[RMDB]
RNA sequence: GGGAACGACUCGAGUAGAGUCGAAAAACAACAGAUAGCUGGAACCAGCGUAGAAUUCUACGCAUAUCCAUAGCGAAUGGUACCUGUAAAGAAAAUAAGCGUGGAUGUACAAGUACCAACAGCCGUGCAUGCCAUGGUGAUGUCAAUCACAUAUGCAACUACGUAAUCACUUCGGUGAUUACGUAGUAAAAGAAACAACAACAACAAC
Reactivity to 2A3 in 0.01 (KOAc 150mM, MgCl2 10mM, bicine 150mM(pH8.5), 24C), signal-to-noise 6, nucleotides 027 to 156: a000c020a010a000c030a030g130a110u130a030g020c020u020g040g010a100a140c090c030a060g000c000g000u000a010g030a180a300u300u080c000u020a000c000g000c000a010u030a030u050c000c000a020u130a030g010c010g070a060a020u060g020g000u030a040c010c010u020g020u110a040a110a080g120a030a120a030a060u210a070a040g050c020g040u040g020g040a040u050g000u020a010c010a050a030g010u010a030c010c000a040a050c040a040g030c030c020g040u030g000c010a040u090g050c060c000a040u050g010g040u020g010a030u040g110u100c060a070a050u050c010a020c020a060u160a050u130g030c010a010
Reactivity to DMS in 0.01 (KOAc 150mM, MgCl2 10mM, bicine 150mM(pH8.5), 24C), signal-to-noise 3, nucleotides 027 to 156: a090c050a090a100c060a080g020a100u000a080g010c050u010g030g000a140a060c110c060a120g040c010g000u000a060g010a220a190u000u000c030u000a020c020g030c000a170u000a070u000c050c050a100u000a040g000c030g040a180a260u000g000g020u010a020c010c010u000g000u000a040a080a120g010a140a100a030a100u000a080a120g010c130g020u010g010g010a120u000g010u010a050c040a050a050g010u000a020c010c000a010a060c090a160g000c050c030g010u000g020c050a140u000g000c000c040a110u000g000g000u020g030a060u010g000u000c160a050a090u000c040a020c040a130u010a080u010g020c060a250
Chemical mapping of a 207-nucleotide RNA with 2A3 and DMS.
2A3 adducts were read by reverse transcription with SuperScript II with manganese.
The data come from the RNA Mapping Database (RMDB), library OK3TST.
High DMS reactivity at an A or C suggests that its Watson-Crick edge is free.